[RMDB]
RNA sequence: GGGAACGACUCGAGUAGAGUCGAAAAGAUAUGGAUUAAGCCUCUACCCACCGUGGACGUUAGGGGAUCGAAGGUUCGGAAACGAACCGUAGUCUUAACGUCCCACGAGGAGGCUUAAUCCUAAGUCGUUCUCUAAACAGUUCGCUGUUUAGAGAACAAAAGAAACAACAACAACAAC
Reactivity to 2A3 in 0.01 (KOAc 150mM, MgCl2 10mM, bicine 150mM(pH8.5), 24C), signal-to-noise 3, nucleotides 027 to 126: g220a070u300a200u300g010g010a000u010u000a000a000g000c020c010u050c040u080a300c070c030c040a050c050c000g030u010g000g010a010c000g010u000u010a070g000g060g070g100a070u290c060g160a260a040g000g010u000u010c020g010g040a050a140a110c030g010a010a000c040c000g010u010a000g010u000c010u000u000a000a000c000g010u070c060c040c010a000c010g000a000g010g010a000g000g000c000u010u000a000a010u000c020c000u000a020a010g060u030c050
Reactivity to DMS in 0.01 (KOAc 150mM, MgCl2 10mM, bicine 150mM(pH8.5), 24C), signal-to-noise 4, nucleotides 027 to 126: g010a090u010a300u020g010g010a030u000u000a000a010g030c000c000u010c000u030a130c060c030c030a300c120c020g000u010g020g010a050c010g010u000u000a020g040g000g010g000a050u010c090g010a210a300g020g000u000u000c000g010g000a070a090a300c030g010a000a000c000c000g000u000a170g010u010c000u000u000a010a010c010g010u000c150c050c010a000c020g000a100g010g000a010g000g010c010u000u000a010a000u000c000c000u000a040a090g000u010c170
Chemical mapping of a 177-nucleotide RNA with 2A3 and DMS. The reactions ran in a buffer of 150 mM KOAc, 10 mM MgCl2 and 150 mM bicine (pH 8.5), at 24 C. For 2A3, 6,876 sequencing reads were counted. For 2A3 the reverse transcriptase was SuperScript II with manganese.